[RMDB]
RNA sequence: GGGAACGACUCGAGUAGAGUCGAAAAGAUAUGGAGGUUAUUCUGGGAGCCUAGGGUCGGAAACGACCCGAAAGGCUUUGAUCAGACUGUAACCUCCUAAGUCAAAAGGGUUGGUUCGCCAACCCAAGUUCAAUAGGGAGUUCGCUCCCUAUUGAACAAAAGAAACAACAACAACAAC
Reactivity to DMS in 0.01 (KOAc 150mM, MgCl2 10mM, bicine 150mM(pH8.5), 24C), signal-to-noise 3, nucleotides 027 to 126: g000a060u000a300u000g000g000a000g000g000u020u000a000u000u000c000u000g010g000g010a010g020c000c010u010a300g000g010g010u010c000g020g010a090a130a200c000g000a030c010c010c000g000a030a100a140g010g000c010u000u000u030g000a080u000c010a010g000a060c300u010g000u010a000a030c000c000u000c000c000u000a010a020g000u000c030a080a060a140a140g010g000g000u000u000g000g010u010u000c260g000c000c000a000a000c000c000c000a000a010
Reactivity to 2A3 in 0.01 (KOAc 150mM, MgCl2 10mM, bicine 150mM(pH8.5), 24C), signal-to-noise 1, nucleotides 027 to 126: g020a010u110a060u180g010g010a000g050g000u030u030a030u140u080c000u000g000g110g000a010g000c050c000u040a110g000g070g010u000c000g000g060a220a020a030c000g010a010c050c170c000g010a000a000a000g020g000c090u070u060u000g000a000u000c000a000g020a050c070u250g050u120a000a000c000c000u000c000c000u000a000a000g010u010c020a060a020a100a210g000g010g000u000u000g020g060u020u090c200g040c070c010a000a010c000c000c000a020a010